Chemical mapping of a 207-nucleotide RNA with 2A3 and DMS. Conditions: 150 mM KOAc, 10 mM MgCl2 and 150 mM bicine (pH 8.5), 24 C. For DMS the reverse transcriptase was MarathonRT. 2A3 adducts were read by reverse transcription with SuperScript II with manganese.
RNA sequence: GGGAACGACUCGAGUAGAGUCGAAAAUUGUGUCCUGAUAGAAGUCUCAAAAACAGCAAGCUACGACUAAAGCCUUGUCUAGAGCCUUAGUAAGAGAUUUAUAGACUCGCUAAGUAAUGGCUUGAGUUAUGUGUCCUUACUUAGUCAAAACAAGACAGUGGUACAUAUGGUUCGCCAUAUGUACCACAAAAGAAACAACAACAACAAC
Reactivity to 2A3 in 0.01 (KOAc 150mM, MgCl2 10mM, bicine 150mM(pH8.5), 24C), signal-to-noise 2, nucleotides 027 to 156: u120u050g050u020g010u100c020c020u010g000a020u060a090g120a080a000g040u020c070u050c150a130a100a050a040a070c050a020g030c030a010a000g010c010u080a030c080g090a020c010u080a060a040a000g040c030c010u060u070g000u000c030u040a030g000a050g030c010c010u010u000a010g040u060a050a000g040a000g000a040u020u250u070a110u050a020g060a040c020u000c000g000c000u010a020a010g020u020a050a050u140g010g000c020u040u120g030a030g060u110u120a080u060g040u000g010u000c000c000u000u000a020c000u000u010a010g040u020c010a000a050a060a020c020a090a000g040a030c060a040
Reactivity to DMS in 0.01 (KOAc 150mM, MgCl2 10mM, bicine 150mM(pH8.5), 24C), signal-to-noise 1, nucleotides 027 to 156: u000u010g000u020g060u010c010c010u000g000a100u000a100g010a050a130g030u000c000u000c040a030a100a060a140a080c050a100g040c040a010a060g060c030u010a100c100g010a070c050u010a050a060a090g010c020c000u000u010g010u000c030u010a070g020a130g010c000c030u000u000a000g010u000a030a100g010a130g000a150u000u030u010a080u000a100g010a020c010u010c000g000c030u000a050a050g000u000a020a040u000g020g010c010u030u000g030a190g030u000u000a100u000g000u000g000u000c000c010u000u000a020c010u000u000a050g000u000c040a050a080a100a090c070a040a080g000a070c030a120